[RMDB]
RNA sequence: GGGAACGACUCGAGUAGAGUCGAAAAAUGUGGUUGUUAUUUCGCUGGAAGUGUGCGCUCCCUGAGGUGCACACAUCUGGGCGGUGCGUGCCCCUCUGGGGUUCUGCGGCGUUGGGUAGCGUGCCCCCGGUACGCUGAGGUUCGCCUCAGCGUACCGAAAAGAAACAACAACAACAAC
Reactivity to 2A3 in 0.01 (KOAc 150mM, MgCl2 10mM, bicine 150mM(pH8.5), 24C), signal-to-noise 1, nucleotides 027 to 126: a030u200g000u030g080g000u060u000g000u010u000a060u040u110u000c050g040c000u010g020g010a010a150g050u070g000u050g050c000g050c000u120c040c080c010u060g060a010g090g060u060g010c000a000c000a000c000a030u040c000u100g150g000g010c040g000g120u020g110c000g000u040g000c010c000c050c000u140c000u070g040g000g000g000u010u030c030u050g020c000g000g000c030g080u100u020g120g000g000u040a040g050c080g030u020g000c000c000c030c010